[RMDB]
Source information:
An RNA of 207 nucleotides, treated with 2A3 and read out base by base. 2A3 adducts were read by reverse transcription with SuperScript II with manganese. Reactivities are given for positions 27 through 156.
RNA sequence: GGGAACGACUCGAGUAGAGUCGAAAAACGGUCGCGCCGGGUGGUGCUCGGCGCCAGCAUGAUGGCGAUCAACGGCAAGAUCCAGCGGGAAGGCGAGGUAGUUCACUUGGUCGCCCAGCAGUUGUUCGACCUGUCGGCCGAUCUGUCGGGGCUUGCCCCAAAACUAAGCCUUCGGGCUUAGUUUUGGAAAAGAAACAACAACAACAAC
Reactivity to 2A3 in 0.01 (KOAc 150mM, MgCl2 10mM, bicine 150mM(pH8.5), 24C), signal-to-noise 2, nucleotides 027 to 156: a000c020g010g070u020c010g010c030g010c040c020g010g000g010u120g070g050u290g100c050u010c050g000g070c010g000c000c020a000g000c020a030u120g060a040u090g100g020c060g000a060u050c070a060a110c110g000g000c000a000a000g040a120u020c010c000a010g040c040g060g000g010a030a000g000g020c000g010a010g000g050u050a030g020u000u050c020a040c070u040u080g060g040u150c030g030c000c000c000a000g030c010a010g060u220u150g010u090u030c000g010a000c020c010u140g300u270c050g150g000c010c000g020a110u020c000u090g160u210c000g020g010g010g010c020u000u010g010c010c010